[RMDB]
RNA sequence: GGGAACGACUCGAGUAGAGUCGAAAAGCAGAACUGCCCAGCAGUGCCCCGUGCGCGCCAUGCGCCGCUCUCGCCUCACUGCUCCCUGCCGACAACGCGCACGCGGCAUGGGAGGCGAACCCGCCUCAUAUUACCCGAGGUUCGCCUCGGGUAAUAUAAAAGAAACAACAACAACAAC
Reactivity to 2A3 in 0.01 (KOAc 150mM, MgCl2 10mM, bicine 150mM(pH8.5), 24C), signal-to-noise 6, nucleotides 027 to 126: g060c040a030g040a180a050c040u070g030c020c040c030a030g030c040a010g030u040g020c020c000c000c010g020u030g010c020g000c010g010c030c050a090u140g020c030g010c010c000g030c010u020c010u020c030g030c010c000u030c020a060c040u070g010c010u030c010c000c000u030g020c010c010g070a100c040a130a040c040g010c010g000c020a010c020g000c000g000g010c010a040u070g020g020g000a010g020g010c010g020a050a070c020c030c010g010c010c010u030c010
Reactivity to DMS in 0.01 (KOAc 150mM, MgCl2 10mM, bicine 150mM(pH8.5), 24C), signal-to-noise 6, nucleotides 027 to 126: g000c090a100g020a100a100c080u030g000c010c000c050a130g000c100a120g020u010g000c010c010c030c020g010u000g000c000g010c030g020c090c080a080u030g010c050g000c030c040g000c040u000c010u010c040g000c010c020u000c040a090c050u020g000c030u010c010c010c000u020g000c010c010g000a100c170a120a190c050g010c020g000c020a030c050g020c240g010g000c000a010u020g010g020g000a020g000g000c010g020a070a120c080c060c020g010c030c020u020c050

Chemical mapping of a 177-nucleotide RNA with 2A3 and DMS. The 2A3 profile rests on 9,953 reads. Values cover nucleotides 27 to 126. Conditions: 150 mM KOAc, 10 mM MgCl2 and 150 mM bicine (pH 8.5), 24 C.